Conditions: 150 mM KOAc, 10 mM MgCl2 and 150 mM bicine (pH 8.5), 24 C. Chemical mapping of a 177-nucleotide RNA with DMS and 2A3. DMS adducts were read by reverse transcription with MarathonRT.
RNA sequence: GGGAACGACUCGAGUAGAGUCGAAAACGUUGGCCAAGACCCUGAAGGGAAGGAUUGGCGCGACUUUGCGCAACUUGUGUCAACUGCCCCCUUCGUUCUCCCUAUGGCUAACCUCGAGGAGAAGGGCGACAUGUAGUUCGUUCGCGAACUACAUGUCAAAAGAAACAACAACAACAAC
Reactivity to DMS in 0.01 (KOAc 150mM, MgCl2 10mM, bicine 150mM(pH8.5), 24C), signal-to-noise 3, nucleotides 027 to 126: c220g010u000u000g010g010c000c000a040a040g000a240c050c010c000u010g050a190a180g020g020g030a150a090g020g000a220u000u000g010g020c010g010c020g000a060c270u010u000u000g000c020g000c050a080a150c060u000u000g000u000g000u000c010a010a030c030u010g000c030c020c010c010c060u000u000c020g020u000u000c020u000c000c060c120u000a060u000g020g020c120u000a070a090c060c050u000c110g000a050g010g000a120g010a030a040g030g010g020c220
Reactivity to 2A3 in 0.01 (KOAc 150mM, MgCl2 10mM, bicine 150mM(pH8.5), 24C), signal-to-noise 5, nucleotides 027 to 126: c020g000u020u030g030g010c000c010a000a030g050a140c030c010c040u150g200a220a140g050g000g050a050a060g120g080a130u090u180g140g000c010g000c010g100a170c190u160u160u260g000c000g000c010a030a020c020u030u020g030u030g010u140c000a000a010c020u050g010c010c000c000c010c020u020u070c020g110u070u030c010u020c030c010c020u110a120u120g030g000c030u030a100a140c020c010u040c050g030a050g000g030a020g010a060a010g030g010g040c030
It was measured as part of the RMDB library OK2TST. The 2A3 profile rests on 4,940 reads.